RNA sequence: GGGAACGACUCGAGUAGAGUCGAAAAGGCUCCCCGCCGGAAGGGGCCAUAAGACGCGCGUGGCUUUUGCCACAGCCGGAUACUUCGGCCAUGCGUCUGCCGUGGGGCCAAGGGCCCCGGCUUAUCACGCUAGGCUUAUGUUCGCAUAAGCCUAGCGAAAAGAAACAACAACAACAAC
Reactivity to 2A3 in 0.01 (KOAc 150mM, MgCl2 10mM, bicine 150mM(pH8.5), 24C), signal-to-noise 2, nucleotides 027 to 126: g010g000c020u060c020c020c010c070g050c030c030g000g000a110a000g030g010g020g000c010c000a060u080a030a050g010a010c000g030c000g000c010g030u010g000g000c000u050u160u230u300g020c000c000a020c000a000g000c000c000g060g000a100u100a180c110u080u110c000g000g000c020c000a080u190g000c020g000u010c000u030g000c000c030g010u130g020g000g000g020c040c000a180a080g220g080g010c000c000c000c000g000g000c000u010u120a220u290c100a040
Reactivity to DMS in 0.01 (KOAc 150mM, MgCl2 10mM, bicine 150mM(pH8.5), 24C), signal-to-noise 1, nucleotides 027 to 126: g000g020c020u000c020c000c030c180g000c010c080g030g040a180a160g060g010g000g020c000c000a090u020a040a000g000a000c020g000c020g070c260g010u020g000g010c000u030u070u010u010g000c020c000a010c000a080g000c020c000g000g010a110u020a130c210u060u060c020g000g000c000c090a000u020g010c000g000u000c000u000g000c000c010g000u050g100g020g000g040c010c090a210a150g010g000g000c000c000c000c000g000g020c000u000u010a080u020c060a270